[RMDB]
RNA sequence: GGGAACGACUCGAGUAGAGUCGAAAAGAUAUGGAUGCACACAGCUUUUGACGAACUAGUAUCGGAAACGAUACGAUGUUCGAUAAGCUGGUGCAUCCUAAGUCAAAGGAGGAGUUCGCUCCUCCAAUCAUGACUACAUCUUCGGAUGUAGUCAUGAAAAAGAAACAACAACAACAAC
Reactivity to 2A3 in 0.01 (KOAc 150mM, MgCl2 10mM, bicine 150mM(pH8.5), 24C), signal-to-noise 4, nucleotides 027 to 126: g030a000u070a020u180g000g000a000u000g010c010a010c010a010c000a040g000c040u080u090u180u300g300a200c090g010a000a000c000u010a010g010u000a000u010c010g020g050a060a040a040c000g010a000u000a010c000g000a010u060g000u000u000c000g010a000u030a020a000g000c000u000g000g000u000g000c000a010u010c000c010u000a000a000g010u000c030a070a040a130g000g010a000g020g000a010g020u080u200c230g180c140u000c000c000u020c000c000a000a010
Reactivity to DMS in 0.01 (KOAc 150mM, MgCl2 10mM, bicine 150mM(pH8.5), 24C), signal-to-noise 5, nucleotides 027 to 126: g010a040u010a300u000g000g000a010u010g010c000a010c000a110c000a010g010c000u000u010u020u000g000a300c140g010a010a010c010u000a300g000u000a000u000c000g000g000a120a080a210c010g020a020u000a000c000g000a120u010g000u000u010c000g000a110u000a010a010g010c000u000g000g020u000g000c000a000u000c000c000u000a000a050g010u010c030a120a130a190g000g010a020g000g000a010g020u010u010c300g020c010u000c000c000u000c010c000a040a020